[RMDB]
RNA sequence: GGGAACGACUCGAGUAGAGUCGAAAAACGAUGUCGUUCGCGACAUCGUAAAUUGUAUAACCUUGCUAGAAGUCUACUUGGUUGUAAAGCGAGACAAGUCAGUGAGAGUCCUAUUCGUAGGACUCAAUAGAAACAAGUAAUUCGUUACUUGUUUCUAAAAAGAAACAACAACAACAAC
Reactivity to DMS in 0.01 (KOAc 150mM, MgCl2 10mM, bicine 150mM(pH8.5), 24C), signal-to-noise 9, nucleotides 027 to 126: a030c000g010a000u000g000u000c000g020u000u010c200g040c000g010a010c000a010u000c000g020u000a010a040a080u010u010g010u010a060u010a070a100c030c010u000u000g010c110u000a120g010a180a130g000u010c010u000a050c010u000u000g000g010u000u000g010u000a040a060a070g000c080g000a070g000a040c090a060a080g010u010c080a060g010u000g010a160g000a020g010u000c000c000u000a020u000u010c160g010u000a010g000g000a010c000u000c000a010a060
Reactivity to 2A3 in 0.01 (KOAc 150mM, MgCl2 10mM, bicine 150mM(pH8.5), 24C), signal-to-noise 7, nucleotides 027 to 126: a010c010g000a000u000g000u000c010g000u030u070c170g000c010g090a000c010a000u000c000g000u000a010a010a020u090u090g080u010a060u020a070a030c010c000u000u030g030c020u040a060g010a300a070g220u060c000u010a020c010u050u050g040g020u030u030g040u070a050a040a020g070c070g050a030g010a070c050a100a060g040u110c070a030g030u040g180a150g000a000g050u000c000c000u010a030u010u080c200g050u030a000g000g000a000c000u000c000a000a000